[RMDB]
RNA sequence: GGGAACGACUCGAGUAGAGUCGAAAAAUUGAUAAACGGCACCUAUAAGGUCGUGCCGAACCAGCGUGACCUACCAACACGCAACGAGCAGUCUGGUAUGACUGCAAACCUAUGGUAAACAAGAUAACUUACACUCUCGAUUCGUCGAGAGUGUAAGAAAAGAAACAACAACAACAAC
Reactivity to DMS in 0.01 (KOAc 150mM, MgCl2 10mM, bicine 150mM(pH8.5), 24C), signal-to-noise 2, nucleotides 027 to 126: a110u030u000g010a110u000a040a130a170c000g010g030c020a010c010c050u000a220u010a120a130g000g000u000c140g000u010g020c000c000g000a030a040c070c070a110g000c000g010u000g000a060c030c030u000a010c010c000a210a050c010a000c020g010c040a080a070c220g040a210g000c000a010g000u000c000u010g000g020u000a050u000g010a000c010u010g010c000a020a030a080c030c050u010a020u000g000g000u010a060a140a100c190a030a050g050a060u000a030a140
Reactivity to 2A3 in 0.01 (KOAc 150mM, MgCl2 10mM, bicine 150mM(pH8.5), 24C), signal-to-noise 3, nucleotides 027 to 126: a000u080u080g020a030u110a070a110a040c000g000g000c000a020c000c020u160a140u070a300a110g100g060u120c000g020u030g000c000c000g010a010a010c010c010a030g000c000g000u010g000a070c000c020u010a010c020c020a000a030c000a010c000g000c030a050a030c030g020a010g000c000a000g000u000c010u080g110g140u250a100u270g000a000c000u020g000c000a030a000a010c030c010u080a100u070g000g000u040a060a100a060c060a110a050g050a160u140a130a030
An RNA of 177 nucleotides, treated with DMS and 2A3 and read out base by base. For 2A3 the reverse transcriptase was SuperScript II with manganese.